[RMDB]
RNA sequence: GGGAACGACUCGAGUAGAGUCGAAAAGUUGCUGCCGUUGCAGAUGCCGCCGGACCCCGAGCCGGGUGGCGCGGCGCCGCCGCAGACGCGAGCGCUCGACUUUCCCUGGGCCGACCGCGCGACGGCGCGGGUGUCUCCACUUCGGUGGAGACACCCGAAAAGAAACAACAACAACAAC
Reactivity to DMS in 0.01 (KOAc 150mM, MgCl2 10mM, bicine 150mM(pH8.5), 24C), signal-to-noise 1, nucleotides 027 to 126: g020u000u000g010c030u010g010c010c080g030u010u000g010c030a110g020a150u010g000c010c060g000c020c000g030g020a100c030c070c050c060g000a120g010c040c010g000g020g030u010g010g030c040g000c140g020g010c020g040c080c000g010c070c050g020c130a110g010a070c120g000c020g030a130g010c070g000c040u000c000g000a090c100u010u000u010c000c010c020u000g010g000g010c020c030g020a120c160c070g020c030g020c020g000a020c000g010g000c030g020
Reactivity to 2A3 in 0.01 (KOAc 150mM, MgCl2 10mM, bicine 150mM(pH8.5), 24C), signal-to-noise 1, nucleotides 027 to 126: g050u040u090g030c030u030g000c030c000g040u010u060g000c020a040g060a300u150g050c000c020g020c020c000g060g080a290c050c040c020c110g020a060g070c060c020g090g040g030u030g030g000c050g020c070g050g000c060g010c040c050g000c000c010g060c100a060g080a220c090g040c020g060a160g030c150g000c020u000c030g130a130c080u080u060u040c020c020c040u010g010g000g000c020c030g000a080c000c050g030c040g020c010g030a000c030g020g000c000g010